[RMDB]
RNA sequence: GGGAACGACUCGAGUAGAGUCGAAAAGUCCGGCACGAUCGGUGAGCUCGACCUCUGCUACAGAAAGAACUCGCUCUAUCACUCGUCGGGACAAGAUGACCGCGCAUACGGAAAAGGUAGGGACGCAGAUUCUGCCUGGAUCCUCCUGAGUCAGGAAGACUAGUUAGACAUUCGUGUCUAACUAGUCAAAAGAAACAACAACAACAAC
Reactivity to DMS in 0.01 (KOAc 150mM, MgCl2 10mM, bicine 150mM(pH8.5), 24C), signal-to-noise 2, nucleotides 027 to 156: g010u000c010c000g010g000c030a060c070g000a040u010c140g000g030u000g010a110g010c050u000c030g000a100c080c040u000c040u020g010c050u000a200c090a120g010a050a140a230g000a050a050c020u000c030g040c030u000c000u010a110u000c020a090c090u000c040g050u000c030g040g030g000a170c100a080a150g020a120u000g000a140c020c020g000c070g040c150a080u000a190c060g010g020a040a090a060a090g020g010u000a040g010g020g030a120c060g030c090a060g010a170u020u000c090u010g000c030c050u010g030g000a100u000c010c010u010c030c000u000g000a140g010u000c020a070g000g020a210a210
Reactivity to 2A3 in 0.01 (KOAc 150mM, MgCl2 10mM, bicine 150mM(pH8.5), 24C), signal-to-noise 5, nucleotides 027 to 156: g030u030c010c000g010g000c050a060c170g060a160u030c030g010g020u020g000a020g020c010u020c010g030a030c020c070u020c010u030g040c040u080a100c040a080g060a040a080a000g010a010a010c000u020c040g020c020u010c030u050a040u030c010a040c110u100c020g080u030c040g060g030g030a050c040a060a050g090a130u130g050a040c010c020g010c020g020c040a040u080a210c040g080g010a060a070a030a040g030g010u030a010g030g020g030a060c030g020c130a010g020a120u050u040c010u010g020c010c010u030g020g020a050u060c010c010u050c000c020u080g040a070g060u070c030a010g020g110a100a040
This 207-nucleotide RNA was probed chemically with DMS and 2A3.
For 2A3 the reverse transcriptase was SuperScript II with manganese.
DMS adducts were read by reverse transcription with MarathonRT.